[RMDB]
RNA sequence: GGGAACGACUCGAGUAGAGUCGAAAAGGAUCCUCUACAGUACUGUACGGUGCUCUUAGUCACUGCCAUGUGGGACCUGGCCCCACAUAUCAUCCACACUACAGCACCAUACGGUACUGCAGAGGAUUAUGUGAUGGAAAUUCGUUUCCAUCACAUAAAAAGAAACAACAACAACAAC
Reactivity to DMS in 0.01 (KOAc 150mM, MgCl2 10mM, bicine 150mM(pH8.5), 24C), signal-to-noise 9, nucleotides 027 to 126: g010g020a030u000c000c000u000c000u000a040c010a020g010u010a000c000u000g010u000a020c090g010g010u010g000c000u000c180u010u010a020g000u000c040a070c070u010g000c220c140a020u000g020u000g000g010g000a100c030c090u000g010g010c040c000c000c000a010c010a000u000a050u010c140a080u020c180c040a080c190a030c000u000a020c300a020g000c010a000c000c000a070u000a000c010g000g000u000a000c000u000g000c030a000g000a020g000g000a000u000
Reactivity to 2A3 in 0.01 (KOAc 150mM, MgCl2 10mM, bicine 150mM(pH8.5), 24C), signal-to-noise 9, nucleotides 027 to 126: g120g030a030u010c000c000u000c000u000a010c000a000g000u000a000c000u010g010u000a000c020g000g000u000g000c000u030c050u090u080a000g000u010c020a000c050u010g040c060c050a020u010g000u010g000g010g020a070c030c100u090g130g030c020c000c030c000a000c000a000u080a020u060c090a060u100c100c010a040c000a000c080u010a010c010a020g000c000a000c000c000a000u000a000c000g000g010u000a000c000u000g000c000a000g000a000g000g000a000u000

An RNA of 177 nucleotides, treated with DMS and 2A3 and read out base by base. The RNA was probed in 150 mM KOAc, 10 mM MgCl2 and 150 mM bicine (pH 8.5) at 24 C. 2A3 adducts were read by reverse transcription with SuperScript II with manganese. Reactivities are rounded to 0.1 and cut off at 0 and 3.